[RMDB]
RNA sequence: GGGAACGACUCGAGUAGAGUCGAAAAUAACUCGUAUGCGUUGGCCGCCUAAAGAGAUUUAGGUAGCCCGUUGGCGUCCGUGGGGCCUACAACGCGGACGCCGACGCCAUCUACAGCAGGCUAGCCGAUCACUCUUGUUCAGGGGCGGCCGGCGAAAGAAAUACGCUAACUUCGGUUAGCGUAUUUCAAAAGAAACAACAACAACAAC
Reactivity to 2A3 in 0.01 (KOAc 150mM, MgCl2 10mM, bicine 150mM(pH8.5), 24C), signal-to-noise 1, nucleotides 027 to 156: u050a020a030c010u020c090g090u140a060u220g110c000g000u030u020g010g010c000c000g010c000c010u050a030a050a000g070a010g030a140u070u140u160a060g040g010u000a030g000c000c030c020g020u000u000g010g000c000g000u000c000c010g000u010g000g000g110g020c030c010u060a080c090a170a010c000g000c010g000g000a000c000g010c000c000g000a000c000g000c010c000a100u090c080u210a100c060a130g050c010a010g010g000c000u030a070g170c000c000g000a010u080c070a030c080u000c000u090u020g080u300u170c130a030g040g050g000g050c000g000g000c010c010g000g000c000g000a010a090a000

Source: RMDB library ARCHII, as collected in RNAgym. The record gives the reactivity of an RNA of 207 nucleotides to 2A3. For 2A3, 649 sequencing reads were counted.